[RMDB]
RNA sequence: GGGAACGACUCGAGUAGAGUCGAAAAUCAAAGAGCGUACAGCACACUCAGACUGUACGACAGUCUGACACACACGUACGCUAGUCCAACGAGAGUGAGAGAGCGUUGGAACAAGUGUGUGAAAAAAUACAAUAGAUCCUUUCGAGGAUCUAUUGUAAAAAGAAACAACAACAACAAC
Reactivity to DMS in 0.01 (KOAc 150mM, MgCl2 10mM, bicine 150mM(pH8.5), 24C), signal-to-noise 6, nucleotides 027 to 126: u010c070a090a130a130g010a050g020c000g000u000a020c030a200g020c120a050c160a100c190u000c010a010g000a020c000u010g020u000a140c270g010a100c020a000g000u000c010u000g000a040c040a020c070a030c040a070c060g010u000a010c030g010c030u010a050g000u000c000c000a020a000c010g020a060g010a130g010u010g000a110g010a100g000a080g010c000g000u000u000g000g000a030a070c180a060a070g010u010g020u000g020u000g000a010a020a060a040a060a100
Reactivity to 2A3 in 0.01 (KOAc 150mM, MgCl2 10mM, bicine 150mM(pH8.5), 24C), signal-to-noise 8, nucleotides 027 to 126: u140c050a050a070a010g150a020g010c010g000u010a000c030a050g030c090a040c010a020c100u030c000a010g010a030c000u020g020u150a200c090g050a030c030a000g010u000c000u010g040a010c000a010c000a000c000a000c060g010u050a010c010g000c000u010a010g010u000c010c000a000a000c000g010a000g010a010g120u130g070a110g010a010g010a010g090c000g000u000u010g010g030a010a030c030a070a060g040u030g000u000g000u000g060a110a020a010a010a010a010
Structure probing data (DMS and 2A3) for a 177-nucleotide construct. DMS adducts were read by reverse transcription with MarathonRT. For 2A3, 25,884 sequencing reads were counted. In probing experiments dimethyl sulfate is read out at A N1 and C N3, which are open when not base-paired.